[RMDB]
RNA sequence: GGGAACGACUCGAGUAGAGUCGAAAACAGUUGGGCGGCGGAAGAACGUUCUCUUUGAGGGCAUUGAAACGGUAUGGAUGCGGGAUAGCAAAGCAGCUUGAAGAAACGAAAACGCCGCCCGGAAAAGCGAGCAAUCUUAAUUCGUUAAGAUUGCUCGAAAAGAAACAACAACAACAAC
Reactivity to 2A3 in 0.01 (KOAc 150mM, MgCl2 10mM, bicine 150mM(pH8.5), 24C), signal-to-noise 4, nucleotides 027 to 126: c070a040g100u210u190g010g000g000c010g000g000c000g010g060a140a020g050a180a010c030g000u010u000c020u010c000u200u000u000g000a020g000g050g000c040a050u020u080g020a100a100a060c060g060g040u200a150u200g100g070a050u140g150c040g000g050g070a100u090a060g040c050a040a100a020g010c010a020g110c010u010u020g000a000a000g000a000a020a000c000g020a010a060a000a000c000g020c000c000g000c000c010c000g000g000a000a000a010a000g100
Reactivity to DMS in 0.01 (KOAc 150mM, MgCl2 10mM, bicine 150mM(pH8.5), 24C), signal-to-noise 3, nucleotides 027 to 126: c050a120g010u020u020g000g000g000c000g010g040c000g000g000a080a140g020a170a170c010g000u000u000c170u000c010u000u010u010g000a000g000g000g010c020a110u010u030g000a050a090a160c100g000g040u020a150u050g010g010a110u010g020c040g000g010g010a150u040a070g000c020a020a070a050g000c010a020g020c010u000u000g010a000a000g000a030a030a030c010g000a140a100a100a200c020g030c000c010g000c000c000c000g000g000a030a050a120a080g000
This 177-nucleotide RNA was probed chemically with 2A3 and DMS. For DMS the reverse transcriptase was MarathonRT. 2A3 adducts were read by reverse transcription with SuperScript II with manganese.